[RMDB]
RNA sequence: GGGAACGACUCGAGUAGAGUCGAAAAGAUGCGGGUUUGGUUCCACCGGAUGAUGGGGGCUUGGUUGAGCCGCACUCGGUGGAUGUGUCGGAUCCUGGCAUGAUCGAGCCUGCAGAUGAUGCGGAUCCACGUUUGUGCAGUUCGCUGCACAAACGUGAAAAGAAACAACAACAACAAC
Reactivity to DMS in 0.01 (KOAc 150mM, MgCl2 10mM, bicine 150mM(pH8.5), 24C), signal-to-noise 1, nucleotides 027 to 126: g000a160u000g010c020g020g020g020u000u020u000g000g010u000u000c010c000a010c000c000g010g010a040u000g020a130u000g020g010g010g010g000c020u000u020g010g000u030u010g000a040g020c000c010g010c010a040c010u000c000g000g040u000g000g010a020u000g010u000g010u000c060g000g020a060u000c060c030u000g020g000c010a010u000g000a060u020c030g010a020g000c030c010u000g000c020a070g000a060u000g000a070u010g020c080g000g010a060u000c050
Reactivity to 2A3 in 0.01 (KOAc 150mM, MgCl2 10mM, bicine 150mM(pH8.5), 24C), signal-to-noise 1, nucleotides 027 to 126: g100a000u120g040c000g000g000g010u000u000u030g000g010u050u000c020c010a010c000c030g080g050a050u050g020a150u170g200g120g020g030g050c040u060u070g150g240u160u300g030a000g020c000c020g070c000a020c020u020c020g000g000u020g000g000a070u060g040u000g030u050c050g000g020a040u040c030c050u130g010g000c000a010u040g000a060u190c010g000a030g000c020c000u020g000c000a020g040a160u200g020a010u170g030c090g040g010a010u020c010